[RMDB]
RNA sequence: GGGAACGACUCGAGUAGAGUCGAAAAGGCUGCCAUCUUGGGACUGCCCUCCCACCUCCCACCUUUCCUGCAACCAUCAGCCGUAUUAGCUGAGUGAACGAGUGAGUGAGUGACUGCCCGAUUCAGGGCUACCGCAGUAUUUCGAUACUGCGGUAGCAAAAGAAACAACAACAACAAC
Reactivity to DMS in 0.01 (KOAc 150mM, MgCl2 10mM, bicine 150mM(pH8.5), 24C), signal-to-noise 5, nucleotides 027 to 126: g020g010c030u010g010c010c040a090u000c100u010u010g020g010g000a070c060u000g000c050c020c060u010c010c010c010a250c090c020u000c010c010c010a100c080c060u000u010u000c020c020u010g010c040a060a070c100c040a120u000c020a020g010c010c090g000u000a070u010u010a060g020c010u000g000a050g000u000g010a060a060c100g000a070g010u000g000a080g020u000g000a100g000u000g000a090c060u000g020c010c010c020g000a170u010u010c130a090g010g000
Reactivity to 2A3 in 0.01 (KOAc 150mM, MgCl2 10mM, bicine 150mM(pH8.5), 24C), signal-to-noise 2, nucleotides 027 to 126: g020g000c020u050g030c030c010a070u070c160u140u090g090g010g080a190c030u070g000c010c000c000u040c010c010c000a020c000c000u000c000c000c000a020c020c010u030u060u040c000c020u040g000c040a030a040c010c000a110u020c010a010g000c030c020g090u110a140u090u120a120g020c030u020g020a020g040u070g030a050a020c040g020a030g050u060g010a060g020u070g020a030g000u030g030a030c040u040g010c000c000c000g040a050u060u110c050a050g050g190
Annotation: The record gives the reactivity of an RNA of 177 nucleotides to DMS and 2A3. The reactions ran in a buffer of 150 mM KOAc, 10 mM MgCl2 and 150 mM bicine (pH 8.5), at 24 C. 2A3 adducts were read by reverse transcription with SuperScript II with manganese.